[RMDB]
RNA sequence: GGGAACGACUCGAGUAGAGUCGAAAAGGACGGUAGCAGCUGCACCCACGUGACGGGCAACUAUCGCAAGGGGAAUGCCCACCUUGGUAAGCCACAGCGCGCCCUGGAGUCCAAGCACAGCAGAGUCGUUUAUGGUGGGAUUCGUCCCACCAUAAACAAAAGAAACAACAACAACAAC
Reactivity to 2A3 in 0.01 (KOAc 150mM, MgCl2 10mM, bicine 150mM(pH8.5), 24C), signal-to-noise 2, nucleotides 027 to 126: g030g010a000c060g000g080u130a030g010c040a010g000c030u030g020c060a110c030c050c000a010c050g090u050g030a030c020g000g000g000c010a070a080c050u080a030u170c070g020c080a050a110g060g000g000g040a110a130u160g030c000c030c030a100c020c000u020u020g040g020u100a080a000g030c010c000a080c050a100g040c050g020c010g020c070c000c000u040g020g030a020g020u010c000c060a000a020g010c030a020c000a010g070c020a020g020a020g140u130c050
Reactivity to DMS in 0.01 (KOAc 150mM, MgCl2 10mM, bicine 150mM(pH8.5), 24C), signal-to-noise 2, nucleotides 027 to 126: g000g010a090c030g020g020u000a060g040c100a110g020c020u000g050c140a090c060c020c020a030c190g010u010g000a040c120g010g020g020c070a010a140c070u000a080u000c010g020c080a080a140g000g000g010g030a190a120u010g030c010c000c010a110c130c020u000u010g010g010u020a090a060g010c020c040a050c110a080g000c090g010c100g020c030c040c000u000g020g010a120g000u000c010c030a070a100g020c120a040c090a060g010c090a060g000a090g030u000c100
Structure probing data (2A3 and DMS) for a 177-nucleotide construct. The 2A3 profile rests on 1,582 reads. The DMS profile rests on 1,556 reads. Conditions: 150 mM KOAc, 10 mM MgCl2 and 150 mM bicine (pH 8.5), 24 C. Source: RMDB library OK2TRN, as collected in RNAgym.